The record gives the reactivity of an RNA of 207 nucleotides to 2A3 and DMS. DMS adducts were read by reverse transcription with MarathonRT. It was measured as part of the RMDB library M2RFPK. The reactions ran in a buffer of 150 mM KOAc, 10 mM MgCl2 and 150 mM bicine (pH 8.5), at 24 C.
RNA sequence: GGGAACGACUCGAGUAGAGUCGAAAAGACGUCAUCCGCGCAAAUCCACAAACGCCAACGAUGAGCGUUUCGCUGUAGCCGCUUAAGGCAACAGCCGGGGCCGCCUGAGCCCUGUUACCAAAGACGGGAAACUCGAUGCCAUUCGUGGCAUCGAGAAUAUUCCUCUAGUCUUCGGACUAGAGGAAUAAAAAGAAACAACAACAACAAC
Reactivity to 2A3 in 0.01 (KOAc 150mM, MgCl2 10mM, bicine 150mM(pH8.5), 24C), signal-to-noise 5, nucleotides 027 to 156: g020a010c010g010u020c000a010u010c040c030g010c010g000c070a060a110a120u140c130c050a120c100a140a120a030c100g000c020c040a070a020c080g040a060u040g020a040g100c010g000u020u060u080c040g000c000u010g000u030a050g010c010c000g090c210u270u270a150a090g000g000c000a010a010c000a010g000c000c000g010g000g000g000c000c060g030c010c020u020g000a010g000c010c000c000u000g040u050u090a030c000c020a010a010a000g100a030c030g000g000g020a050a040a020c000u000c000g000a000u000g000c000c000a030u080u060c220g080u110g000g000c000a000u010c000g000a000g000a000a000
Reactivity to DMS in 0.01 (KOAc 150mM, MgCl2 10mM, bicine 150mM(pH8.5), 24C), signal-to-noise 2, nucleotides 027 to 156: g010a040c020g030u000c010a040u000c000c100g000c040g010c060a050a080a100u010c030c010a090c080a020a300a050c030g030c010c060a050a130c050g010a050u000g010a030g000c020g020u000u000u000c060g000c070u010g050u000a080g040c000c010g020c300u010u010a100a150g010g030c000a050a030c030a030g030c010c020g000g000g010g010c020c040g000c100c070u000g000a210g010c010c000c010u000g000u000u000a100c070c040a060a100a120g000a150c100g000g000g030a140a120a150c010u010c020g000a030u000g000c010c000a080u000u000c230g030u000g010g020c000a000u030c000g000a000g020a030a040